[RMDB]
RNA sequence: GGGAACGACUCGAGUAGAGUCGAAAAUACAAGAGGGGCACUCAGAUUCGUUUGUUGGGUUAAGGUUAGUGAACCAUUAACUGUCUGUGCAAUAUCCCUACGAAUGAACUGAGAUGAAUCUAGACCAUCUAAUAAAUUCGUAUCAGCAGCUUUUGCUGAUUCAGUUUAAAUUCGUUUAAACUGAAUCAAAAGAAACAACAACAACAAC
Reactivity to 2A3 in 0.01 (KOAc 150mM, MgCl2 10mM, bicine 150mM(pH8.5), 24C), signal-to-noise 9, nucleotides 027 to 156: u170a020c040a050a020g040a050g080g020g010g000c020a010c030u010c010a030g100a300u020u020c020g000u010u000u020g020u020u050g020g020g010u050u080a090a050g050g000u010u050a050g030u120g210a130a100c040c020a070u070u080a040a030c020u010g060u110c020u070g150u080g010c010a050a070u040a050u170c000c000c010u010a000c000g010a010a000u010g000a010a000c010u010g000a010g020a040u050g030a030a050u050c060u070a020g070a080c040c030a040u040c060u090a070a080u100a110a210a070u170u140c060g040u110a050u120c030a020g040c000a010g030c030u070u130u180u150g010c030u050
Reactivity to DMS in 0.01 (KOAc 150mM, MgCl2 10mM, bicine 150mM(pH8.5), 24C), signal-to-noise 3, nucleotides 027 to 156: u010a090c040a100a080g010a090g020g020g030g020c080a100c020u010c030a070g010a200u000u000c080g020u000u000u000g010u000u000g010g010g030u000u010a070a150g000g010u000u000a090g020u010g000a090a140c100c040a070u000u000a040a070c030u000g010u010c050u000g010u000g010c080a090a140u000a110u000c010c010c010u000a090c030g010a040a040u000g000a070a070c070u000g000a040g020a120u000g010a110a100u000c070u010a110g010a130c090c030a050u000c040u010a050a100u000a050a070a080u000u000c020g010u000a070u000c030a030g010c010a080g010c100u000u000u000u000g010c070u000
Structure probing data (2A3 and DMS) for a 207-nucleotide construct. The RNA was probed in 150 mM KOAc, 10 mM MgCl2 and 150 mM bicine (pH 8.5) at 24 C. DMS adducts were read by reverse transcription with MarathonRT. 2A3 adducts were read by reverse transcription with SuperScript II with manganese.